[RMDB]
RNA sequence: GGGAACGACUCGAGUAGAGUCGAAAAGCUGGUAUUGGAAAAUACUACAAGACUAAUACUUGUAGGUUUGUAGAAUUAGAUGACCAAGGGCAUCAUUUAGACUCCUAUUUUGUCGUUAAGAGGCAUAUGACGCACGAGUUCGCUCGUGCGAAAAGAAACAACAACAACAAC
Reactivity to 2A3 in 0.01 (KOAc 150mM, MgCl2 10mM, bicine 150mM(pH8.5), 24C), signal-to-noise 4, nucleotides 027 to 129: g010c030u050g020g000u090a060u040u060g040g020a090a060a000a060u100a160c000u020a010c000a010a010g060a040c090u120a040a130u110a170c030u010u020g020u040a000g000g000u020u100u040g010u040a040g010a050a010u120u050a020g090a170u080g040a030c020c020a030a020g030g000g020c000a010u050c000a000u120u030u050a060g000a010c020u030c020c000u000a010u000u070u010u060g030u000c000g000u010u040a080a010g030a010g070g040c040a070u050a040u290g040a020
Reactivity to DMS in 0.01 (KOAc 150mM, MgCl2 10mM, bicine 150mM(pH8.5), 24C), signal-to-noise 3, nucleotides 027 to 129: g080c090u020g000g020u020a090u060u040g060g030a020a040a030a040u010a150c010u030a020c040a030a000g050a100c000u020a000a150u050a230c090u040u040g040u010a010g010g020u000u000u000g070u060a010g010a130a040u000u000a070g030a200u040g050a110c110c110a040a090g000g000g000c040a100u060c070a070u000u050u000a000g000a050c040u020c000c000u060a100u050u030u020u040g030u010c030g030u040u060a130a050g060a060g030g020c050a000u050a030u030g010a000
The record gives the reactivity of an RNA of 170 nucleotides to 2A3 and DMS. The reactions ran in a buffer of 150 mM KOAc, 10 mM MgCl2 and 150 mM bicine (pH 8.5), at 24 C. Source: RMDB library 15KLIB, as collected in RNAgym. For 2A3 the reverse transcriptase was SuperScript II with manganese.